[RMDB]
RNA sequence: GGGAACGACUCGAGUAGAGUCGAAAAUGUAGAUGAAAGAGGCCUAUAUAAGUCUUUAAAAGGAGCAUGCAAACUCAAGUUAUGUGGAGUUCUAGGACUUAGACUUAUGGAUGGAACAUGGGUCGCGGCUGCAUGUAGUCUUCGGACUACAUGCAGCAAAAGAAACAACAACAACAAC
Reactivity to 2A3 in 0.01 (KOAc 150mM, MgCl2 10mM, bicine 150mM(pH8.5), 24C), signal-to-noise 2, nucleotides 027 to 126: u200g050u170a090g100a300u150g050a080a080a010g050a040g030g000c000c010u000a000u000a020u020a100a010g000u000c020u030u200u080a110a200a030a020g000g000a070g000c020a050u140g040c090a040a000a060c000u100c080a220a000g050u260u190a120u070g090u040g080g060a090g020u050u000c010u030a020g020g020a000c030u050u000a000g010a020c000u020u000a000u030g150g000a040u080g070g020a050a000c020a060u120g020g010g010u000c020g030c070g060
Reactivity to DMS in 0.01 (KOAc 150mM, MgCl2 10mM, bicine 150mM(pH8.5), 24C), signal-to-noise 1, nucleotides 027 to 126: u050g000u000a130g000a050u050g050a040a110a030g010a090g010g030c010c010u030a080u040a000u000a000a030g010u000c000u040u010u000a040a010a170a100g000g000a030g080c020a130u000g020c220a250a080a000c000u000c060a060a070g030u020u040a070u020g040u050g010g000a070g010u000u010c010u000a040g000g040a010c100u000u000a030g000a040c020u000u000a000u000g000g050a010u000g010g000a050a120c190a130u030g000g010g000u030c000g030c150g000

Chemical mapping of a 177-nucleotide RNA with 2A3 and DMS.
Values cover nucleotides 27 to 126.
For DMS the reverse transcriptase was MarathonRT.
The reactions ran in a buffer of 150 mM KOAc, 10 mM MgCl2 and 150 mM bicine (pH 8.5), at 24 C.